[RMDB]
The record gives the reactivity of an RNA of 207 nucleotides to DMS. Reactivities are given for positions 27 through 156. For DMS, 1,460 sequencing reads were counted. DMS (dimethyl sulfate) methylates the pairing face of unpaired adenines and cytosines. Reactivities are rounded to 0.1 and cut off at 0 and 3. It was measured as part of the RMDB library RNAMAK. The reactions ran in a buffer of 150 mM KOAc, 10 mM MgCl2 and 150 mM bicine (pH 8.5), at 24 C.
RNA sequence: GGGAACGACUCGAGUAGAGUCGAAAACCGUAGGCUCACUACCCACCUUCCGACGACUCGAAGAACAGCUCUUCGAAAGAGGAGCUGGGAGAGUCCAAGGAAGAGGUGAGCCUAAACGGAAAAGAGCGACGCAUAUCUUCGGAUAUGCGUCGCUCAAGUAAUCCUAAUUGUUCGCAAUUAGGAUUACAAAAGAAACAACAACAACAAC
Reactivity to DMS in 0.01 (KOAc 150mM, MgCl2 10mM, bicine 150mM(pH8.5), 24C), signal-to-noise 1, nucleotides 027 to 156: c010c000g000u000a020g000g020c000u000c000a030c000u000a060c000c030c050a300c110c000u010u010c000c000g000a300c130g000a010c000u000c010g050a200a230g000a160a250c010a070g000c000u000c000u000u000c010g020a140a070a250g040a010g050g000a010g040c000u010g000g000g000a100g010a090g000u000c010c070a050a300g010g000a030a010g050a090g000g050u000g020a020g000c030c000u010a000a000a060c000g030g010a100a070a160a170g000a060g020c160g000a080c000g040c020a000u000a000u010c000u000u000c250g050g060a040u000a010u000g060c000g020u000c000g010c000u010c000a000a150